RNA sequence: GGGAACGACUCGAGUAGAGUCGAAAAGCAGCCGGCGAUAACGGUCCAUACCAACAUCGUUGGCACCGACAUGGGCUACGGCAACCCGGCUUACUCCACUCCGCCGACACUUUGGUGCGUCGGCGGCGUACGAUUUGGGUUUCGACCCAAAUCGUACAAAAGAAACAACAACAACAAC
Reactivity to DMS in 0.01 (KOAc 150mM, MgCl2 10mM, bicine 150mM(pH8.5), 24C), signal-to-noise 2, nucleotides 027 to 126: g010c190a100g010c000c000g000g000c070g000a130u000a080a160c080g000g000u000c050c050a010u000a130c030c000a020a080c050a100u000c210g010u000u000g000g020c240a080c230c080g040a120c210a090u020g000g000g010c010u010a070c180g000g000c100a030a110c240c010c020g000g010c010u000u000a070c080u010c020c030a050c200u010c030c000g010c000c000g030a030c010a000c000u000u000u030g000g010u010g020c080g010u000c040g000g030c030g000g010c300
Reactivity to 2A3 in 0.01 (KOAc 150mM, MgCl2 10mM, bicine 150mM(pH8.5), 24C), signal-to-noise 3, nucleotides 027 to 126: g110c050a020g030c030c010g000g000c040g120a100u050a170a000c080g010g050u000c000c000a040u040a100c030c000a010a030c020a290u300c250g010u000u000g000g000c010a050c030c070g070a100c050a150u030g000g000g000c020u100a020c080g040g000c090a010a060c020c000c010g020g000c020u060u060a070c030u000c020c010a050c060u050c000c000g000c000c000g010a010c000a000c040u290u300u300g300g300u190g090c010g020u000c000g000g000c000g010g000c010

The record gives the reactivity of an RNA of 177 nucleotides to DMS and 2A3. DMS adducts were read by reverse transcription with MarathonRT. The 2A3 profile rests on 2,196 reads. The DMS profile rests on 992 reads. Reactivities are rounded to 0.1 and cut off at 0 and 3.